[RMDB]
RNA sequence: GGGAACGACUCGAGUAGAGUCGAAAAUCAGUGUUACAGAUUUCUUGAAGAAAGCUGUUUUUCUUAAGGAAGCACUGAAAUGUGAACAAAUAUCUAAUGAUGGUUUUAUAGUGUGUAAUACACAGAGUAGUACUGAUUUAUUCGUAAAUCAGUACUAAAAAGAAACAACAACAACAAC
Reactivity to DMS in 0.01 (KOAc 150mM, MgCl2 10mM, bicine 150mM(pH8.5), 24C), signal-to-noise 8, nucleotides 027 to 126: u000c010a020g010u000g000u000u010a060c070a090g000a070u000u000u000c000u000u010g010a140a120g010a010a010a020g020c100u000g000u000u000u000u000u000c010u000u010a100a100g030g010a030a110g000c000a010c000u010g010a010a070a090u000g010u010g010a150a120c090a070a080a090u010a040u000c040u010a080a110u010g010a070u010g010g000u000u010u000u000a080u000a100g020u000g010u000g000u000a090a070u000a300c010a010c020a120g010a140g010
Reactivity to 2A3 in 0.01 (KOAc 150mM, MgCl2 10mM, bicine 150mM(pH8.5), 24C), signal-to-noise 5, nucleotides 027 to 126: u010c000a000g000u010g010u070u090a050c060a070g120a130u010u060u010c010u080u130g080a110a050g020a020a040a030g020c070u070g190u110u110u010u020u070c010u070u030a050a020g080g010a000a000g000c010a000c020u010g010a030a030a030u210g010u030g050a030a010c030a060a160a050u130a060u040c070u180a150a110u210g090a060u040g060g070u090u100u080u160a150u090a210g030u020g000u010g030u110a170a130u140a240c020a000c010a020g090a010g080